[RMDB]
RNA sequence: GGGAACGACUCGAGUAGAGUCGAAAAACGCAUCAUACGUGAUGCGAGAACUACAGUUCCGCUCCUCUAGCACACAGAGGUCAAUUGGGUGCGACCCCCCCCUCUCCCGGGGGUCAACGGGAACCAAAAAAGACCCUUUAGUUCGCUAAAGGGUCAACUAGCAUAAUAAGUUCGCUUAUUAUGCUAGAAAAGAAACAACAACAACAAC
Reactivity to DMS in 0.01 (KOAc 150mM, MgCl2 10mM, bicine 150mM(pH8.5), 24C), signal-to-noise 2, nucleotides 027 to 156: a210c010g000c010a010u000c010a110u000a100c300g040u010g030a040u000g030c010g000a090g020a060a070c040u010a090c100a110g020u000u000c010c030g020c050u010c000c010u000c080u000a170g000c110a070c060a090c040a090g000a060g030g020u010c060a030a090u000u000g000g000g030u010g000c020g000a300c000c000c000c000c000c000c010c000u000c040u000c020c010c010g030g030g000g010g020u000c070a010a060c060g020g000g000a060a270c080c070a000a030a050a110a090a130g000a050c000c000c000u000u000u000a020g010u000u010c300g020c020u000a020a030a010g010g030g000u000c000a000a020